[RMDB]
RNA sequence: GGGAACGACUCGAGUAGAGUCGAAAAGAUAUGGACGCAUCCAAGAACUUGGAUUUAUUAUCGGAAACGAUAAUUGUCAGUUUGGAUAGCGUCCUAAGUCAAAGCCGUGGGGUUCGCCCCACGGCAACGAUGUUAGCUACUUCGGUAGCUAACAUCGAAAAGAAACAACAACAACAAC
Reactivity to 2A3 in 0.01 (KOAc 150mM, MgCl2 10mM, bicine 150mM(pH8.5), 24C), signal-to-noise 2, nucleotides 027 to 126: g010a010u070a050u100g010g000a000c000g040c010a000u040c000c010a010a040g180a190a160c150u300u300g170g020a070u280u300u200a020u000u140a000u010c000g010g000a040a020a000c020g010a010u010a020a050u040u020g040u030c110a170g140u030u050u060g020g010a030u130a130g040c010g020u010c000c000u010a010a000g020u000c030a160a120a030g000c020c020g000u000g000g010g010g010u070u120c300g210c020c000c020c000a000c000g000g000c000a000a000
Reactivity to DMS in 0.01 (KOAc 150mM, MgCl2 10mM, bicine 150mM(pH8.5), 24C), signal-to-noise 2, nucleotides 027 to 126: g000a010u000a300u000g010g020a000c010g050c020a040u000c000c000a040a030g000a100a070c300u010u030g040g010a030u000u020u010a020u000u000a000u000c000g020g000a090a060a150c000g010a000u000a000a000u010u000g020u000c000a100g000u000u000u000g000g010a020u000a120g000c000g000u010c000c010u010a000a100g010u000c010a100a170a210g050c020c000g090u000g000g000g000g000u000u010c280g020c000c000c010c000a010c000g000g000c030a000a010